Structure probing data (2A3 and DMS) for a 177-nucleotide construct. The RNA was probed in 150 mM KOAc, 10 mM MgCl2 and 150 mM bicine (pH 8.5) at 24 C. For 2A3 the reverse transcriptase was SuperScript II with manganese. DMS adducts were read by reverse transcription with MarathonRT. The DMS profile rests on 4,796 reads.
[RMDB]
RNA sequence: GGGAACGACUCGAGUAGAGUCGAAAACUGUGGUGGAGCCUGUGGCAGGGGAUCUUCUCAAGCCGAGAAUAGGGCUCUCCGAGGAGGAUUGGAGACGGGUGACAGAGGAGACCACUGUCAUUAUUCACAUGUACCGUAGGUUCGCCUACGGUACAUGAAAAGAAACAACAACAACAAC
Reactivity to 2A3 in 0.01 (KOAc 150mM, MgCl2 10mM, bicine 150mM(pH8.5), 24C), signal-to-noise 2, nucleotides 027 to 126: c010u020g040u120g120g040u080g030g050a050g060c050c040u050g040u060g060g000c030a010g030g000g000g040a190u030c010u050u010c000u040c010a040a040g040c020c000g030a040g040a070a140u170a150g130g040g000c070u000c000u000c010c010g000a040g050g090a110g050g030a160u060u140g050g020a000g010a010c040g000g030g020u050g040a070c110a080g000a030g010g000a040g020a010c000c010a040c020u010g010u060c020a030u020u080a060u080u090c030a000
Reactivity to DMS in 0.01 (KOAc 150mM, MgCl2 10mM, bicine 150mM(pH8.5), 24C), signal-to-noise 4, nucleotides 027 to 126: c060u010g020u000g020g010u000g000g000a070g010c070c120u000g040u010g020g000c010a030g010g020g000g010a130u000c030u010u000c000u000c000a110a300g010c020c010g010a130g020a100a140u020a130g010g010g020c090u000c000u000c030c020g000a080g000g000a150g010g000a170u000u000g000g010a040g000a040c080g010g000g020u000g010a140c230a110g000a030g000g010a060g000a050c020c010a040c010u000g000u010c020a020u000u000a050u000u000c100a090